[RMDB]
An RNA of 207 nucleotides, treated with 2A3 and read out base by base. For 2A3, 845 sequencing reads were counted. For 2A3 the reverse transcriptase was SuperScript II with manganese. Source: RMDB library OK3TST, as collected in RNAgym. The RNA was probed in 150 mM KOAc, 10 mM MgCl2 and 150 mM bicine (pH 8.5) at 24 C.
RNA sequence: GGGAACGACUCGAGUAGAGUCGAAAAUAGCAUUAGAUAUAGGGACCUGCCCGCCAAUCAGAACACGACAAAGCUGUUUUAUGUCGACAAUAAAGUGACUGAUGUUGACACGUUCAACACGGAAGCUAAUCAUGCGAACUUUAGAACCACAGUCAUCGGCGUCAUUAUCAUUCGUGAUAAUGACGCCAAAAGAAACAACAACAACAAC
Reactivity to 2A3 in 0.01 (KOAc 150mM, MgCl2 10mM, bicine 150mM(pH8.5), 24C), signal-to-noise 2, nucleotides 027 to 156: u090a030g050c050a050u190u080a100g020a050u050a020u120a210g020g000g000a040c020c020u110g040c010c010c000g000c060c010a010a050u070c040a040g100a120a000c050a020c070g070a010c160a080a060a020g040c020u040g050u170u050u010u020a120u190g030u030c030g100a070c060a030a030u160a120a100a000g000u000g010a000c010u050g080a150u070g220u020u000g010a010c010a020c300g090u120u000c010a000a000c030a000c020g000g010a000a000g010c020u060a000a060u100c020a000u080g010c030g030a030a030c000u050u120u090a020g020a140a030c000c030a000c000a050g090u040c010a010u080c070